An RNA of 177 nucleotides, treated with 2A3 and read out base by base. Source: RMDB library OK1LIB, as collected in RNAgym.
RNA sequence: GGGAACGACUCGAGUAGAGUCGAAAACCGCUAUUUUCGUGCUGAAAUCAGGUUUUGCGCAGCCAACGUCGCAAACUCGACGAAAGGCAGUAUCCCUGGAACCGGGCAAUCUGGAUUCCAGCCCACGAGGCUGCACUGAGUUCGCUCAGUGCAGCCUAAAAGAAACAACAACAACAAC
Reactivity to 2A3 in 0.01 (KOAc 150mM, MgCl2 10mM, bicine 150mM(pH8.5), 24C), signal-to-noise 2, nucleotides 027 to 126: c000c000g040c030u090a220u050u030u020u040c000g000u020g190c040u070g120a000a050a120u190c100a140g050g070u040u080u080u140g040c070g040c140a090g030c000c070a030a050c070g000u020c000g030c000a080a080a080c050u070c000g030a000c000g030a070a000a000g000g000c040a030g000u050a160u100c000c010c000u060g060g000a070a000c060c010g020g000g000c150a100a170u130c020u060g010g090a300u010u010c020c000a000g000c000c030c040a020c000g050